Structure probing data (2A3 and DMS) for a 177-nucleotide construct. For DMS, 1,184 sequencing reads were counted. For 2A3 the reverse transcriptase was SuperScript II with manganese. For DMS the reverse transcriptase was MarathonRT.
RNA sequence: GGGAACGACUCGAGUAGAGUCGAAAAUAAAAUAAUGCACAUAAUCCAGUCGCAGACGCUAAAAAUGACGCUGCGUCGCGACGGAUGUGGCAUCGCGCACUCACGCCGAAGUGAAAUCGGUAAAAAACCUAAUCUACAGGUUCGCCUGUAGAUUAGGAAAAGAAACAACAACAACAAC
Reactivity to 2A3 in 0.01 (KOAc 150mM, MgCl2 10mM, bicine 150mM(pH8.5), 24C), signal-to-noise 3, nucleotides 027 to 126: u110a000a060a010a020u200a070a040u060g060c040a030c000a300u190a240a060u160c010c020a090g010u000c000g000c040a060g000a010c000g010c020u100a140a060a040a110a120u180g090a070c090g040c240u080g000c000g000u000c000g010c000g000a000c000g000g010a000u000g010u000g000g000c000a000u030c040g040c000g010c020a050c040u040c010a020c050g000c000c000g010a040a000g020u030g100a130a130a100u010c010g000g040u200a170a050a000a010a000a020
Reactivity to DMS in 0.01 (KOAc 150mM, MgCl2 10mM, bicine 150mM(pH8.5), 24C), signal-to-noise 2, nucleotides 027 to 126: u060a150a050a050a080u030a110a030u000g000c030a070c000a000u000a170a030u000c000c010a170g030u000c000g000c010a100g030a010c010g000c010u010a010a050a040a130a200u010g010a130c290g030c200u000g010c010g010u000c000g000c010g010a010c020g000g010a010u010g010u000g000g020c000a010u000c100g010c080g020c080a090c070u000c060a050c170g000c000c010g000a000a020g010u010g000a040a070a060u000c000g000g000u010a010a050a080a040a030a070